[RMDB]
RNA sequence: GGGAACGACUCGAGUAGAGUCGAAAAGAUAUGGAGAGGUACUGUAGAUCUAGGGAUCGGAAACGAUCCCAGGGAUCGCAGAUAGUACUCCCCACCUCCUAAGUCAAAAGCAUCGUUCGCGAUGCAAGUAUUGUUACUACUUCGGUAGUAACAAUACAAAAGAAACAACAACAACAAC
Reactivity to DMS in 0.01 (KOAc 150mM, MgCl2 10mM, bicine 150mM(pH8.5), 24C), signal-to-noise 8, nucleotides 027 to 126: g010a100u010a100u000g000g010a030g010a050g010g020u000a020c000u000g020u000a070g020a000u000c000u000a170g010g000g010a010u000c000g010g000a090a080a220c010g010a010u000c000c000c000a030g010g000g010a000u000c000g010c110a060g000a080u000a050g010u000a060c010u010c020c010c010c010a170c120c070u000c010c000u000a080a130g010u010c170a060a070a130a130g010c000a010u000c000g010u000u010c240g030c020g010a010u000g020c000a040a070
Reactivity to 2A3 in 0.01 (KOAc 150mM, MgCl2 10mM, bicine 150mM(pH8.5), 24C), signal-to-noise 5, nucleotides 027 to 126: g030a060u200a070u290g020g000a060g000a010g040g090u180a030c010u000g030u120a130g020a020u010c000u040a020g000g000g000a000u000c000g000g000a080a030a010c010g000a000u000c000c010c020a020g050g020g030a000u000c000g000c000a000g030a040u110a030g070u080a100c020u060c040c020c010c010a030c000c040u000c000c010u070a140a060g140u180c130a090a080a020a090g010c000a000u000c010g050u080u090c190g020c020g120a010u020g000c000a010a000
An RNA of 177 nucleotides, treated with DMS and 2A3 and read out base by base. 2A3 adducts were read by reverse transcription with SuperScript II with manganese. Values cover nucleotides 27 to 126. It was measured as part of the RMDB library TTRDEL.